About this RNA
The record gives the reactivity of an RNA of 177 nucleotides to DMS. Reactivities are given for positions 27 through 126. For DMS, 900 sequencing reads were counted. Conditions: 150 mM KOAc, 10 mM MgCl2 and 150 mM bicine (pH 8.5), 24 C. For DMS the reverse transcriptase was MarathonRT.
[RMDB]
RNA sequence: GGGAACGACUCGAGUAGAGUCGAAAAAUCAACUUUAGAAUUUUAGAACUAUCCCAGCCGAAUUUAGAAUUUUAGAUUUUCGACUUUCGGCUCGGGAGAGUUAAUAAUUGGCUGGGAGAGAAAGUAAUGGUACAUAGAGAUUCGUCUCUAUGUACCAAAAAGAAACAACAACAACAAC
Reactivity to DMS in 0.01 (KOAc 150mM, MgCl2 10mM, bicine 150mM(pH8.5), 24C), signal-to-noise 1, nucleotides 027 to 126: a090u000c050a080a090c120u010u000u020a130g000a070a030u000u000u000u040a100g000a030a050c030u000a080u000c000c020c000a040g010c000c010g000a000a030u000u000u000a070g010a030a000u030u000u020u000a120g010a130u000u000u000u000c010g000a090c080u000u000u000c020g010g020c000u000c100g030g000g010a020g000a070g010u000u000a100a110u010a020a040u020u010g010g020c060u000g010g000g000a040g010a070g030a060a080a110g010u010a070a140